Conditions: 150 mM KOAc, 10 mM MgCl2 and 150 mM bicine (pH 8.5), 24 C. Chemical mapping of a 207-nucleotide RNA with DMS and 2A3. Reactivities are given for positions 27 through 156. The 2A3 profile rests on 2,051 reads. Source: RMDB library RNAMAK, as collected in RNAgym. 2A3 adducts were read by reverse transcription with SuperScript II with manganese.
RNA sequence: GGGAACGACUCGAGUAGAGUCGAAAAUCCUAAGUCGCUUUGCAAUGCGUUUGACGGUCAUUGUCAGGAGGAUCGGAAACGAUCCUCCUUGGAUUUAUGACCCGAGCAUUGCAGAAGCGAUAUGGAAAAGUAGCAUAGUGUUCGCACUAUGCUACAACUGCAAUGAAUACUUCGGUAUUCAUUGCAGAAAAGAAACAACAACAACAAC
Reactivity to DMS in 0.01 (KOAc 150mM, MgCl2 10mM, bicine 150mM(pH8.5), 24C), signal-to-noise 1, nucleotides 027 to 156: u000c000c010u020a110a240g000u000c000g060c000u000u010u000g020c000a020a020u000g000c000g020u020u010u000g030a190c240g040g010u000c020a030u010u020g020u000c010a020g000g010a010g030g010a030u010c000g010g010a150a120a300c020g020a010u000c010c010u000c020c000u000u010g000g020a010u000u010u010a030u030g000a030c000c000c040g010a100g010c000a000u000u000g010c000a010g070a020a040g020c010g000a020u000a050u000g000g000a060a070a190a140g020u000a000g000c000a000u010a020g050u000g030u000u000c300g060c010a020c000u000a020u000g000c000u000a000c010a060a090
Reactivity to 2A3 in 0.01 (KOAc 150mM, MgCl2 10mM, bicine 150mM(pH8.5), 24C), signal-to-noise 2, nucleotides 027 to 156: u010c010c000u020a100a010g060u000c000g010c010u000u020u020g000c010a000a010u000g000c030g220u110u150u180g110a090c060g000g000u000c000a010u000u020g020u000c000a000g000g000a000g010g020a010u010c010g000g040a050a070a080c010g000a000u010c010c000u030c020c010u050u020g000g000a010u020u040u040a010u010g020a000c000c000c000g000a000g000c000a000u000u000g030c000a000g010a000a000g000c010g000a000u010a080u050g020g020a030a030a060a090g020u010a000g020c000a000u000a000g010u010g040u100u060c300g060c100a000c000u000a000u000g000c000u010a000c000a000a010